[RMDB]
RNA sequence: GGGAACGACUCGAGUAGAGUCGAAAAGUCAUUAUGUUCGCAUAAUGACAAAUAUAUGGGACUUUAUAAAACCUGAUAGCCGUCCAAGAUCAUGUAUCGGCAAAAACAGACGAUUCGUCGUCUGUAACAAAGUCAUAAAGUUCGCUUUAUGACUUUGAAAAGAAACAACAACAACAAC
Reactivity to 2A3 in 0.01 (KOAc 150mM, MgCl2 10mM, bicine 150mM(pH8.5), 24C), signal-to-noise 5, nucleotides 027 to 126: g010u000c010a000u000u010a010u020g020u020u070c170g000c090a000u000a000a010u010g010a000c000a010a060a000u100a000u020a090u080g030g000g040a040c020u130u240u040a140u110a110a110a020a040c000c010u030g090a120u090a080g030c010c010g000u020c030c020a050a030g090a120u150c080a060u110g080u120a050u120c020g000g010c050a010a080a000a060a020c000a000g000a000c010g010a010u010u050c120g020u010c000g000u000c090u000g000u000a010a010
Reactivity to DMS in 0.01 (KOAc 150mM, MgCl2 10mM, bicine 150mM(pH8.5), 24C), signal-to-noise 6, nucleotides 027 to 126: g000u000c000a010u000u000a000u000g010u000u020c180g030c000a010u000a010a010u000g000a000c000a040a080a060u000a070u010a060u000g010g000g000a080c070u010u000u020a070u010a100a080a110a130c030c030u010g000a120u010a100g010c020c020g010u010c090c060a070a090g000a080u010c130a060u000g010u000a040u010c020g020g000c050a060a050a060a070a030c000a000g000a010c000g010a030u010u020c170g020u000c000g010u000c000u000g010u000a030a130